[RMDB]
RNA sequence: GGGAACGACUCGAGUAGAGUCGAAAACGUCAAGGAUUCGUCCUUGACGAAAGUCGCGGCUUGAGGGCGUAUACGGCUGCGCACACACACGACCGUCAAGCCAAACAGGUGGAUUCGUCCACCUGAACGUCUCUAUAGACUUCGGUCUAUAGAGACGAAAAGAAACAACAACAACAAC
Reactivity to DMS in 0.01 (KOAc 150mM, MgCl2 10mM, bicine 150mM(pH8.5), 24C), signal-to-noise 3, nucleotides 027 to 126: c010g010u000c000a010a010g000g000a010u000u010c240g030u000c010c000u000u000g000a000c000g000a020a040a080g010u000c060g000c170g000g030c010u000u000g000a060g000g000g010c000g020u020a120u020a140c090g000g000c010u010g000c020g000c020a120c200a080c140a070c120a060c060g000a250c010c000g020u010c020a000a010g010c020c020a060a100a240c000a010g000g000u000g000g010a030u000u010c130g000u000c000c000a010c000c000u000g000a010a080
Reactivity to 2A3 in 0.01 (KOAc 150mM, MgCl2 10mM, bicine 150mM(pH8.5), 24C), signal-to-noise 3, nucleotides 027 to 126: c010g000u000c010a000a000g030g010a020u050u110c180g070u030c070c000u000u000g000a000c000g000a010a000a000g020u020c010g000c090g090g000c010u010u000g010a020g020g060g000c000g000u020a050u030a060c030g020g000c010u050g030c020g000c000a050c000a000c000a000c000a010c150g150a090c000c000g060u030c010a010a000g000c010c000a010a030a010c010a000g000g000u000g000g010a030u040u060c170g050u020c020c010a010c000c000u000g010a020a010
About this RNA
Structure probing data (DMS and 2A3) for a 177-nucleotide construct. Reactivities are given for positions 27 through 126. Values are in units of 0.01, from 0 to 300, in steps of 10. The RNA was probed in 150 mM KOAc, 10 mM MgCl2 and 150 mM bicine (pH 8.5) at 24 C. The 2A3 profile rests on 9,361 reads.